Structure probing data (2A3) for a 207-nucleotide construct. Source: RMDB library ARCHII, as collected in RNAgym. For 2A3, 1,269 sequencing reads were counted. Values cover nucleotides 27 to 156. The reactions ran in a buffer of 150 mM KOAc, 10 mM MgCl2 and 150 mM bicine (pH 8.5), at 24 C.
[RMDB]
RNA sequence: GGGAACGACUCGAGUAGAGUCGAAAAGUCCAGGCCAAGCGUGGCGUCGACAAGGCGUCGGGACAGGAGUGUCGCCGGCACCUGGUCGCAUAAUGAGGGGCGUACGGCUCAGGGCCGAAAGGCAGCAGGCAAAAGUCCCCGCGUCAUGACAGUGGUCCCGUAACAUGUUGUUCGCAACAUGUUACGGAAAAGAAACAACAACAACAAC
Reactivity to 2A3 in 0.01 (KOAc 150mM, MgCl2 10mM, bicine 150mM(pH8.5), 24C), signal-to-noise 2, nucleotides 027 to 156: g040u000c000c000a020g010g000c000c000a050a030g030c040g000u000g000g000c000g000u060c000g000a000c020a010a000g000g010c000g010u020c000g010g000g000a010c010a010g200g110a200g150u140g000u040c140g080c300c000g020g000c030a030c000c010u010g000g010u010c010g000c110a140u240a300a030u140g050a110g010g030g000g000c040g020u070a040c110g050g000c000u010c040a000g000g030g050c000c000g030a040a050a020g010g000c020a000g000c010a020g040g000c000a040a000a070a070g040u050c000c010c000c000g000c000g010u000c000a000u020g070a200c010a100g070u000g000g010u020c040